[RMDB]
RNA sequence: GGGAACGACUCGAGUAGAGUCGAAAAGAUAUGGAGCAAGAGCGAUAAGUAUGUUCGUCGGAAACGACGACAUACUUUUGACGCUCAACCUCCUAAGUCAAAACUCAUGCUGUUCGCAGCAUGAGAACAUUUAACAUGCCUUCGGGCAUGUUAAAUGAAAAGAAACAACAACAACAAC
Reactivity to 2A3 in 0.01 (KOAc 150mM, MgCl2 10mM, bicine 150mM(pH8.5), 24C), signal-to-noise 3, nucleotides 027 to 126: g030a010u090a030u170g010g000a000g030c030a080a100g010a000g000c030g040a080u020a100a000g010u000a010u020g110u170u190c000g000u000c010g030g030a050a080a060c010g000a010c000g000a010c000a010u000a000c000u000u000u010u010g010a000c000g000c000u000c000a010a000c010c000u000c010c000u040a110a030g070u030c020a040a010a040a180c000u000c000a000u000g000c020u030g060u170u160c300g020c110a000g000c000a000u010g010a000g000a010a000
Reactivity to DMS in 0.01 (KOAc 150mM, MgCl2 10mM, bicine 150mM(pH8.5), 24C), signal-to-noise 5, nucleotides 027 to 126: g020a050u010a300u010g020g000a000g010c020a070a300g000a000g010c010g040a140u000a000a010g000u000a010u000g000u000u000c000g020u000c000g000g010a080a100a210c000g020a010c000g020a000c000a000u010a000c000u000u000u000u000g030a140c060g010c000u000c000a040a300c300c000u000c010c000u010a050a120g000u010c000a050a050a060a220c020u000c000a000u000g010c000u010g010u000u010c290g020c000a010g000c010a010u000g000a000g000a030a120

Chemical mapping of a 177-nucleotide RNA with 2A3 and DMS. 2A3 adducts were read by reverse transcription with SuperScript II with manganese. For DMS, 3,705 sequencing reads were counted. High DMS reactivity at an A or C suggests that its Watson-Crick edge is free. The data come from the RNA Mapping Database (RMDB), library TTRDEL. The reactions ran in a buffer of 150 mM KOAc, 10 mM MgCl2 and 150 mM bicine (pH 8.5), at 24 C.